[RMDB]
Chemical mapping of a 177-nucleotide RNA with DMS. The reactions ran in a buffer of 150 mM KOAc, 10 mM MgCl2 and 150 mM bicine (pH 8.5), at 24 C. Values cover nucleotides 27 to 126.

RNA sequence: GGGAACGACUCGAGUAGAGUCGAAAAGAUAUGGAAGUUCGACAUGUUGGGGAUUCGAAGCGUUUGACGCACUUCGGAAACGAAGUGCCGAGCUUCGAAUCCUCAACAACAGCGAACUUCCUAAGUCCAUCGACUACAUGUUCGCAUGUAGUCGAUGAAAAGAAACAACAACAACAAC
Reactivity to DMS in 0.01 (KOAc 150mM, MgCl2 10mM, bicine 150mM(pH8.5), 24C), signal-to-noise 2, nucleotides 027 to 126: g000a080u010a300u010g000g000a000a000g030u000u000c000g000a100c130a300u000g020u020u000g000g000g000g040a010u000u010c000g000a020a010g000c000g020u030u010u010g000a210c300g010c010a020c000u000u000c000g010g010a150a060a300c000g010a010a020g000u000g030c000c000g010a080g000c010u000u000c020g000a000a000u020c000c040u000c000a000a000c000a000a050c270a250g030c010g010a020a030c000u010u000c000c000u000a030a080g000u000c020